The data come from the RNA Mapping Database (RMDB), library TTRDEL. Structure probing data (2A3 and DMS) for a 177-nucleotide construct.
[RMDB]
RNA sequence: GGGAACGACUCGAGUAGAGUCGAAAAGAUAUGGAGCAUGACAUGCUGGAAACAUCGGAAACGAUGUUAUGCAGCAACAGCAUGCCUCCUAAGUCAAAAGUCACCCGUCGUUCGCGACGGGUGACAACUAUCGAUUUGUCUUCGGACAAAUCGAUAGAAAAGAAACAACAACAACAAC
Reactivity to 2A3 in 0.01 (KOAc 150mM, MgCl2 10mM, bicine 150mM(pH8.5), 24C), signal-to-noise 1, nucleotides 027 to 126: g030a010u050a040u210g010g010a010g000c000a000u040g100a270c020a100u030g010c000u040g050g190a000a000a000c010a010u000c000g050g060a110a030a000c010g020a020u000g000u000u040a170u270g140c010a010g020c000a010a030c040a050g140c000a000u040g030c070c020u020c000c000u030a180a060g070u040c050a000a060a060a170g040u020c020a000c000c000c030g000u000c000g040u060u230c300g000c000g140a030c020g000g000g010u000g020a000c000a000a000
Reactivity to DMS in 0.01 (KOAc 150mM, MgCl2 10mM, bicine 150mM(pH8.5), 24C), signal-to-noise 1, nucleotides 027 to 126: g000a040u000a300u000g000g000a030g010c000a000u010g010a080c130a130u000g000c000u000g000g000a020a100a010c000a000u000c000g000g000a160a160a220c030g030a020u010g000u000u000a070u000g010c000a000g000c000a000a060c280a120g000c010a010u000g000c100c010u010c000c000u000a040a100g000u000c000a040a070a130a180g040u000c010a000c000c030c000g000u000c000g020u000u010c280g030c020g030a000c000g000g000g000u000g030a010c000a030a020
In probing experiments dimethyl sulfate is read out at A N1 and C N3, which are open when not base-paired.